RNA sequence: GGGAACGACUCGAGUAGAGUCGAAAACUGGGUGGGCUCUGAUCCUAUAUGUAGGGCCGGCCAAGUCCUUGUUCCACUCCUUCUUGCAGUGGAUCUUGCCGCUUCUCUGAAUAUGAUUGAAAUGCCCACAGCACUUGCAGAGCAAGCAGAAAAGACAUCAGUAAUAGUCGUUCGCGACUAUUACUGAAAAAGAAACAACAACAACAAC
Reactivity to DMS in 0.01 (KOAc 150mM, MgCl2 10mM, bicine 150mM(pH8.5), 24C), signal-to-noise 2, nucleotides 027 to 156: c040u000g000g030g050u010g000g010g040c010u010c030u000g020a140u000c100c070u000a180u000a110u010g030u000a060g010g010g070c180c030g020g030c040c010a050a110g030u000c020c010u000u010g010u000u000c020c010a050c020u000c050c090u000u010c170u010u010g030c080a020g000u010g000g000a020u000c020u000u000g030c030c020g030c030u010u000c000u000c000u000g020a080a050u000a080u000g010a160u000u010g010a060a120a120u000g020c020c010c070a090c070a120g010c060a020c000u000u000g010c020a100g010a090g020c080a030a040g010c000a140g020a080a090a070a050g000a160c080a190
Reactivity to 2A3 in 0.01 (KOAc 150mM, MgCl2 10mM, bicine 150mM(pH8.5), 24C), signal-to-noise 4, nucleotides 027 to 156: c030u030g050g020g020u030g000g020g000c000u040c150u090g030a040u050c020c060u120a060u040a030u240g120u110a030g010g000g000c030c020g000g000c090c010a030a000g040u070c020c050u080u160g100u090u010c020c000a000c020u080c020c040u160u250c070u110u180g020c090a000g000u000g010g010a010u000c010u010u050g060c020c030g040c040u230u060c030u030c000u000g050a080a000u050a050u080g020a070u020u070g030a080a100a060u130g010c010c010c030a040c010a020g000c000a010c000u020u030g000c030a030g030a020g210c030a000a010g010c010a010g190a080a150a020a000g120a040c040a080
The data come from the RNA Mapping Database (RMDB), library OK3TST. The record gives the reactivity of an RNA of 207 nucleotides to DMS and 2A3. For 2A3 the reverse transcriptase was SuperScript II with manganese. The reactions ran in a buffer of 150 mM KOAc, 10 mM MgCl2 and 150 mM bicine (pH 8.5), at 24 C. In probing experiments dimethyl sulfate is read out at A N1 and C N3, which are open when not base-paired. For DMS, 4,788 sequencing reads were counted. Reactivities are given for positions 27 through 156.